[RMDB]
Chemical mapping of a 207-nucleotide RNA with 2A3.
RNA sequence: GGGAACGACUCGAGUAGAGUCGAAAAUUCUUUCCACUCUGCUAUGUAGCCUUUCCAGAGUGGCUACCUGUGUUUGCCAAAAAGUGGGAGGCCAUCUUGGCAGGAAGCCUUCUGCCUCCCAGGGAGAUGAGUGGUUCUCAAACCAUGCUGGUCCCCAACUAGUAGUGACGUUCGCGUCACUACUAGUAAAAGAAACAACAACAACAAC
Reactivity to 2A3 in 0.01 (KOAc 150mM, MgCl2 10mM, bicine 150mM(pH8.5), 24C), signal-to-noise 1, nucleotides 027 to 156: u100u020c030u080u100u030c020c000a000c000u030c000u020g040c020u040a100u260g100u140a020g010c030c010u170u280u080c080c030a020g000a020g060u060g010g010c010u000a010c000c000u100g070u090g050u260u180u180g100c000c010a120a080a050a090a240g080u080g000g000g000a000g000g030c040c020a160u150c050u140u070g040g000c000a020g080g110a200a040g000c000c020u030u000c030u020g020c010c000u000c050c010c010a020g060g010g000a160g010a130u080g000a020g030u010g060g000u030u000c070u000c010a060a200a090c000c000a010u210g000c040u090g020g040u080c040c050c000c000a000
The reactions ran in a buffer of 150 mM KOAc, 10 mM MgCl2 and 150 mM bicine (pH 8.5), at 24 C. For 2A3, 557 sequencing reads were counted.